[RMDB]
RNA sequence: GGGAACGACUCGAGUAGAGUCGAAAACGGUGACGUCGUUGAUGGGACCGACCGGUUCAGGUAAGACGACUUUUUUGCGCACCCUAAACCGGAUGAAUGACAAGGUCUCCGGUUACCGCUACAGCGGAUGGUCCGAAUGAUUCGUCAUUCGGACCAUAAAAGAAACAACAACAACAAC
Reactivity to DMS in 0.01 (KOAc 150mM, MgCl2 10mM, bicine 150mM(pH8.5), 24C), signal-to-noise 2, nucleotides 027 to 126: c100g010g010u000g000a060c090g000u020c030g030u000u010g000a190u010g000g000g000a050c010c020g000a180c130c120g010g000u000u010c060a020g010g020u000a080a100g010a100c010g000a080c050u000u020u010u010u000u010g020c040g000c040a150c160c010c030u000a030a020a010c010c020g000g000a080u000g010a060a110u000g000a160c210a110a120g010g010u000c000u000c000c020g000g000u000u000a040c000c010g000c030u000a090c190a140g010c080g000g000
Reactivity to 2A3 in 0.01 (KOAc 150mM, MgCl2 10mM, bicine 150mM(pH8.5), 24C), signal-to-noise 2, nucleotides 027 to 126: c060g090g020u040g020a030c040g000u060c010g020u060u090g040a120u110g050g020g000a000c000c010g040a080c060c070g020g000u000u030c010a020g060g040u130a130a030g050a050c010g090a190c000u230u090u000u020u080u150g040c080g010c000a050c030c010c000u010a040a050a020c000c000g030g040a080u200g080a130a080u150g110a130c060a140a100g110g010u010c000u020c030c000g030g050u020u030a030c020c020g020c050u110a110c020a090g000c010g030g040

An RNA of 177 nucleotides, treated with DMS and 2A3 and read out base by base. Reactivities are given for positions 27 through 126. Conditions: 150 mM KOAc, 10 mM MgCl2 and 150 mM bicine (pH 8.5), 24 C. The DMS profile rests on 2,134 reads. High 2A3 reactivity points to a flexible backbone, as in loops and unpaired stretches. Source: RMDB library OK2TRN, as collected in RNAgym.